[RMDB]
RNA sequence: GGGAACGACUCGAGUAGAGUCGAAAAUGUGCUGGGGAUGUACACGUGUUUGCCCCCGUAUCUGUGUAUUAUCUCUUGUUAUAGCGCUGGGAUAGGUGGAGUGGUGGCGGUCUGUGCUUGGCGGGCGGUGUAUUUUAAUUUUCGAAUUAAAAUACACAAAAGAAACAACAACAACAAC
Reactivity to 2A3 in 0.01 (KOAc 150mM, MgCl2 10mM, bicine 150mM(pH8.5), 24C), signal-to-noise 9, nucleotides 027 to 126: u160g030u060g010c020u030g000g010g000g010a010u020g020u050a000c010a000c020g070u040g070u120u180u200g060c000c000c000c010c000g040u090a090u070c050u080g020u000g010u020a030u160u110a040u060c010u010c000u040u050g100u140u140a190u130a120g050c030g000c030u040g030g000g020a090u080a100g040g060u100g030g060a090g020u090g030g010u030g030g000c010g010g010u010c030u050g040u030g010c020u030u040g030g010c000g010g010g000c040g020
Reactivity to DMS in 0.01 (KOAc 150mM, MgCl2 10mM, bicine 150mM(pH8.5), 24C), signal-to-noise 6, nucleotides 027 to 126: u020g020u010g010c020u000g000g000g000g000a020u000g010u000a010c020a020c020g000u020g010u020u030u020g010c030c010c000c010c040g020u030a030u020c080u020g020u000g010u000a010u010u040a030u000c010u000c010u010u020g010u020u030a100u030a070g010c030g020c020u000g010g000g010a080u010a050g010g010u010g000g000a090g010u020g010g020u010g000g000c070g000g010u000c040u010g010u010g000c050u010u010g010g010c040g000g000g010c070g010